An RNA of 177 nucleotides, treated with 2A3 and DMS and read out base by base. DMS adducts were read by reverse transcription with MarathonRT. The DMS profile rests on 1,759 reads. Source: RMDB library M2PK50, as collected in RNAgym. The reactions ran in a buffer of 150 mM KOAc, 10 mM MgCl2 and 150 mM bicine (pH 8.5), at 24 C.
RNA sequence: GGGAACGACUCGAGUAGAGUCGAAAACUCCAUUGCUUCGGCAAUGGAGAAACAGGACGUGAGAGCGAAACGGAGGUAGGUCCAACUACCUUCUCACAAAAAAAACGCUUAGGUUCGCCUAAGCGAACCUCCCGUUGUUGUUCGCAACAACGGGAGGAAAAGAAACAACAACAACAAC
Reactivity to 2A3 in 0.01 (KOAc 150mM, MgCl2 10mM, bicine 150mM(pH8.5), 24C), signal-to-noise 2, nucleotides 027 to 126: c010u010c000c000a000u000u010g000c000u030u040c170g150g000c000a010a000u010g020g000a000g000a000a000a000c070a020g090g160a030c090g020u030g020a060g010a010g050c080g080a190a070a030c100g040g050a010g000g000u000a000g000g040u050c070c020a070a100c040u010a000c000c000u020u000c000u010c010a040c010a020a030a030a000a000a000a050a050c010g000c000u010u010a000g030g020u050u030c220g050c040c010u000a010a000g000c010g010a010a010
Reactivity to DMS in 0.01 (KOAc 150mM, MgCl2 10mM, bicine 150mM(pH8.5), 24C), signal-to-noise 2, nucleotides 027 to 126: c000u000c000c000a010u000u000g000c000u000u010c210g010g020c020a010a020u000g000g000a000g010a040a060a090c110a130g000g020a110c170g000u000g000a010g020a100g020c070g000a050a060a070c300g040g000a020g000g000u000a010g010g000u000c140c140a080a270c010u000a010c000c000u000u000c000u010c050a020c070a000a010a000a060a040a040a090a090c000g010c010u000u000a010g000g000u000u000c200g010c010c020u000a010a020g000c000g000a000a020